Chemical mapping of a 177-nucleotide RNA with 2A3 and DMS. In probing experiments dimethyl sulfate is read out at A N1 and C N3, which are open when not base-paired. For DMS, 4,170 sequencing reads were counted. The reactions ran in a buffer of 150 mM KOAc, 10 mM MgCl2 and 150 mM bicine (pH 8.5), at 24 C.

RNA sequence: GGGAACGACUCGAGUAGAGUCGAAAAUUGCAAGCCUUCGGGCUUGCAAGGUGUCGGAAUGCGGAAUAUAUAAUCCUGCGCUUAAGGAUUAUACCGACUUAAGUGCCAGGCUGUUCGCAGCCUGGAAGUUUGGAGCUAAAUUCGUUUAGCUCCAAACAAAAGAAACAACAACAACAAC
Reactivity to 2A3 in 0.01 (KOAc 150mM, MgCl2 10mM, bicine 150mM(pH8.5), 24C), signal-to-noise 2, nucleotides 027 to 126: u030u020g000c000a000a000g000c000c030u060u050c260g110g000g010c000u000u020g020c010a000a000g000g000u100g000u000c010g000g060a100a040u170g060c080g080g190a140a010u240a010u010a000u000a120a020u040c000c010u040g030c260g040c110u120u120a030a000g010g000a000u020u000a010u010a050c000c000g010a020c000u040u090a180a030g070u040g110c000c000a000g000g000c000u010g030u030u050c230g000c110a010g000c000c000u000g020g010a000a000
Reactivity to DMS in 0.01 (KOAc 150mM, MgCl2 10mM, bicine 150mM(pH8.5), 24C), signal-to-noise 4, nucleotides 027 to 126: u000u000g010c010a020a020g020c000c010u000u010c250g030g030g010c000u000u000g010c000a000a000g020g010u000g010u000c020g000g010a180a100u000g010c100g000g000a090a100u010a180u000a020u000a020a010u000c000c000u000g020c300g000c240u000u010a060a030g000g000a020u000u000a010u000a110c000c010g000a010c020u010u010a140a140g010u000g000c000c010a010g000g000c010u000g010u010u000c220g010c010a010g010c000c000u000g000g000a020a010